RNA sequence: GGGAACGACUCGAGUAGAGUCGAAAAGCAACGGCAUCCACAUCACAGUGUACCGAUACCAAGACAACAAGCGCAUCGAACAGACGGUGGUCAUACCUGACCACGACCUGACGGACUUGCGCUACCCUUGCGAGUUCAUCGCAACGAGAGUUGUCGAUCACACCGAAGUAUUCGUACUUCGGUGUGAAAAAGAAACAACAACAACAAC
Reactivity to DMS in 0.01 (KOAc 150mM, MgCl2 10mM, bicine 150mM(pH8.5), 24C), signal-to-noise 1, nucleotides 027 to 156: g020c020a030a200c120g030g060c000a080u030c030c040a070c000a090u000c150a090c190a300g040u000g010u000a190c010c010g000a100u010a160c000c010a080a120g000a010c010a010a010c000a110a100g050c020g020c010a030u010c000g000a110a240c020a020g010a100c040g090g060u000g010g050u000c000a170u010a180c170c130u000g060a040c000c000a010c010g000a010c000c010u000g000a250c100g000g000a060c020u000u000g000c000g000c000u010a050c020c020c060u010u000g000c000g030a040g000u010u000c140a140u000c000g000c000a000a000c010g020a150g000a170g000u000u000g010u010c000g000a210
Reactivity to 2A3 in 0.01 (KOAc 150mM, MgCl2 10mM, bicine 150mM(pH8.5), 24C), signal-to-noise 3, nucleotides 027 to 156: g060c050a080a060c020g000g000c020a100u060c080c010a020c000a070u230c110a050c030a110g020u010g000u090a040c010c010g020a020u050a120c040c020a060a060g030a010c010a000a010c000a040a000g000c000g020c000a010u040c020g080a180a020c010a010g070a030c060g120g000u010g000g000u000c010a060u150a300c090c200u100g000a000c000c000a000c000g020a030c000c020u030g020a050c020g020g050a030c050u040u050g000c000g000c000u080a060c010c000c010u010u000g000c000g000a020g020u100u250c130a130u010c110g000c000a000a020c040g090a050g010a010g060u000u000g010u020c000g000a010